RNA sequence: GGGAACGACUCGAGUAGAGUCGAAAAAGGCACACUUCUAUAUCAUUUUACAAACAGAGUGACAGAGAGGUUCACCUCUGAGCUCUGUUAGUGAACGCAGAGGUUACAGGUGAAGCGUUGUAACAACUGCGUUCAUAGUUCUGUGAAUGCUGUGCCACAGUCCCUACUAGUUCGCUAGUAGGGACUGAAAAGAAACAACAACAACAAC
Reactivity to DMS in 0.01 (KOAc 150mM, MgCl2 10mM, bicine 150mM(pH8.5), 24C), signal-to-noise 1, nucleotides 027 to 156: a040g030g000c000a050c000a060c040u000u010c050u000a090u010a080u010c050a120u010u000u010u020a300c070a150a080a090c050a010g000a000g010u000g000a130c010a080g010a040g000a130g020g020u000u010c230a050c040c000u000c000u000g010a300g010c010u010c000u010g020u010u000a050g000u010g000a010a010c040g000c010a020g010a040g000g000u000u000a010c020a100g010g010u000g020a100a110g040c070g030u010u000g020u010a020a080c010a020a130c000u000g000c000g010u010u000c000a010u010a050g010u000u000c120u010g040u030g000a040a090u010g010c060u000g000u030g000c010c020a150
Reactivity to 2A3 in 0.01 (KOAc 150mM, MgCl2 10mM, bicine 150mM(pH8.5), 24C), signal-to-noise 5, nucleotides 027 to 156: a010g010g010c010a010c000a010c000u080u030c060u090a160u090a080u250c070a090u050u100u100u200a060c040a020a040a010c010a010g020a020g040u080g180a170c030a010g040a010g020a090g060g080u240u220c080a100c100c000u010c000u000g000a000g000c000u000c000u010g010u010u000a010g000u000g000a000a000c000g000c000a000g030a010g020g030u000u000a000c000a000g040g130u130g170a120a020g120c070g110u050u010g000u020a000a000c010a030a070c000u000g010c020g000u010u000c000a000u000a000g010u040u090c070u070g080u030g040a040a020u030g010c060u010g040u000g000c000c000a000
This 207-nucleotide RNA was probed chemically with DMS and 2A3.
Reactivities are given for positions 27 through 156.
The RNA was probed in 150 mM KOAc, 10 mM MgCl2 and 150 mM bicine (pH 8.5) at 24 C.
It was measured as part of the RMDB library OK3TST.
For DMS, 2,394 sequencing reads were counted.